[RMDB]
RNA sequence: GGGAACGACUCGAGUAGAGUCGAAAAGAAGUGAAGCCAAUCUUCUGCCGCGCCGACCGCACGAAUGGUACCUCCGGGCUCCGCCGCGGCGAAGGCAUCCUGCUGAGCUCCAUAGCACCCGAUCGGGGUGAGCAGGAGUGGAGCUUCCGAAAAAUUCCGAGGGAUAGGGAUUCGUCCCUAUCCCUCGAAAAGAAACAACAACAACAAC
Reactivity to 2A3 in 0.01 (KOAc 150mM, MgCl2 10mM, bicine 150mM(pH8.5), 24C), signal-to-noise 1, nucleotides 027 to 156: g110a130a010g050u150g120a000a000g000c010c020a150a180u020c000u000u090c080u190g000c010c000g000c000g020c010c010g090a260c050c020g080c090a120c020g050a070a060u170g130g000u120a060c010c020u070c030c040g020g010g020c060u080c050c030g000c000c000g060c000g000g010c010g010a010a000g030g010c000a020u050c000c000u010g000c030u010g030a060g010c000u030c020c000a040u050a150g060c100a060c120c000c000g050a080u230c130g000g000g000g000u010g030a050g000c000a000g000g030a000g010u080g080g010a070g000c000u000u050c000c020g020a010a000a000a200a000u180u050c070
Source information: This 207-nucleotide RNA was probed chemically with 2A3. The RNA was probed in 150 mM KOAc, 10 mM MgCl2 and 150 mM bicine (pH 8.5) at 24 C. It was measured as part of the RMDB library OK3TST. 2A3 adducts were read by reverse transcription with SuperScript II with manganese.